[RMDB]
RNA sequence: GGGAACGACUCGAGUAGAGUCGAAAAUUGAAGCGGACGUCGCAGCACGUGCUGAUGACGAAGGCUUCAUCACAUUAAAGAACAAUCUAUAUAGAUUGGUUUGGCAUGUUGAGCGUAAAGACGUUCCGAGCCCCUACCUUCGGGUAGGGGAAAAGAAACAACAACAACAAC
Reactivity to DMS in 0.01 (KOAc 150mM, MgCl2 10mM, bicine 150mM(pH8.5), 24C), signal-to-noise 5, nucleotides 027 to 129: u030u000g010a070a000g020c010g050g050a300c020g010u000c000g040c020a050g010c020a300c300g040u090g080c070u020g010a100u000g020a000c000g000a000a160g010g010c040u070u000c010a030u050c080a110c000a050u040u060a010a140a080g030a090a030c010a040a000u020c020u010a140u070a080u000a000g000a020u020u000g000g040u000u000u000g030g060c240a070u030g010u040u100g040a060g030c090g010u020a030a110a040g070a140c030g040u010u020c010c010g050a070g010
Reactivity to 2A3 in 0.01 (KOAc 150mM, MgCl2 10mM, bicine 150mM(pH8.5), 24C), signal-to-noise 7, nucleotides 027 to 129: u080u030g000a000a000g000c000g030g160a020c010g000u000c010g000c010a000g000c030a040c300g270u300g060c020u020g020a260u130g000a010c000g020a200a070g050g000c000u000u000c000a020u000c010a010c010a020u110u200a110a020a020g010a050a000c000a010a000u000c020u040a150u030a070u150a230g020a020u030u040g110g000u060u040u020g020g000c020a010u030g000u070u090g050a030g040c030g020u070a030a100a040g090a030c020g010u020u000c010c000g010a050g040

This 170-nucleotide RNA was probed chemically with DMS and 2A3.
The reactions ran in a buffer of 150 mM KOAc, 10 mM MgCl2 and 150 mM bicine (pH 8.5), at 24 C.